[RMDB]
RNA sequence: GGGAACGACUCGAGUAGAGUCGAAAACUCACAAAGCUACAUCCAGUACCAACCAGUCAUCAGAGCCUACGACACAGCAACACUCUUGAACAGCAACAUCGCUCACUUCGAAGUGAUGCGAAACAGGCUCGACCAGGCAGUCAACAUCACGAAAUACCACUAUAACAACCUUCGGGUUGUUAUAGUGAAAAGAAACAACAACAACAAC
Reactivity to 2A3 in 0.01 (KOAc 150mM, MgCl2 10mM, bicine 150mM(pH8.5), 24C), signal-to-noise 6, nucleotides 027 to 156: c020u030c010a060c060a020a120a010g030c030u070a030c020a100u060c040c020a020g020u060a050c020c010a040a040c020c010a030g060u030c020a080u050c030a060g010a000g010c000c010u060a070c080g100a030c030a020c030a130g010c010a030a040c010a020c020u100c050u040u040g020a020a030c040a140g020c010a020a160c020a300u160c160g000c010u000c000a050c010u040u070c050g020a030a000g000u000g010a030u060g000c010g010a040a010a000c040a000g010g000c000u000c000g000a000c010c000a020g020g020c010a000g050u060c020a030a060c010a120u120c040a020c140g110a020a070a030u210a070c030
Reactivity to DMS in 0.01 (KOAc 150mM, MgCl2 10mM, bicine 150mM(pH8.5), 24C), signal-to-noise 2, nucleotides 027 to 156: c010u000c050a130c010a100a090a130g000c010u030a070c090a020u000c020c040a090g030u020a090c030c030a050a060c010c030a150g000u000c030a110u010c080a080g010a080g020c000c080u000a140c110g020a160c080a110c050a150g100c000a100a090c050a040c050u000c000u000u000g050a080a030c050a060g010c010a080a080c090a090u000c040g000c010u000c030a070c080u000u020c090g000a090a110g040u010g010a050u000g020c000g050a060a100a090c040a110g010g000c010u000c010g000a050c070c020a100g000g000c060a110g000u000c010a030a050c040a090u000c040a140c020g020a060a070a100u000a090c120